[RMDB]
RNA sequence: GGGAACGACUCGAGUAGAGUCGAAAAACAUUGGCCUUCGGGCCAAUGUACUGGAAAUAAAGCCGAAAGGCUACGCAUUCCUUAUUUGGCCAAAGCCUGCGAGAUUAUGUAAGUUCGCUUACAUAAAUACUAGGGAUCAGUUCGCUGAUCCCUAGUAAAAAGAAACAACAACAACAAC
Reactivity to 2A3 in 0.01 (KOAc 150mM, MgCl2 10mM, bicine 150mM(pH8.5), 24C), signal-to-noise 1, nucleotides 027 to 126: a000c000a000u030u000g000g000c000c030u000u050c300g060g000g000c000c010a000a000u000g000u010a010c020u000g060g090a010a060a070u230a070a150a000g010c000c000g040a060a020a020g000g040c000u020a010c010g020c010a040u000u030c000c000u070u080a200u070u140u070g030g030c020c020a070a030a030g000c000c000u060g060c050g050a120g020a160u000u050a020u040g010u000a000a000g030u000u130c250g020c050u030u000a000c000a000u030a020a050a000
Reactivity to DMS in 0.01 (KOAc 150mM, MgCl2 10mM, bicine 150mM(pH8.5), 24C), signal-to-noise 2, nucleotides 027 to 126: a040c010a000u000u000g010g020c000c000u000u020c160g070g000g020c010c010a010a000u010g010u010a040c110u000g020g010a040a010a030u010a120a110a060g040c000c000g000a090a050a150g010g000c020u000a020c190g000c090a170u010u020c010c000u030u000a150u000u010u000g030g010c000c070a040a080a110g000c020c020u000g050c120g020a160g010a180u010u010a000u000g000u000a010a010g000u000u000c240g020c000u000u010a000c000a010u000a000a020a150
Notes
Source: RMDB library M2PK50, as collected in RNAgym. The record gives the reactivity of an RNA of 177 nucleotides to 2A3 and DMS. 2A3 adducts were read by reverse transcription with SuperScript II with manganese. Reactivities are given for positions 27 through 126. For DMS the reverse transcriptase was MarathonRT. The DMS profile rests on 1,301 reads.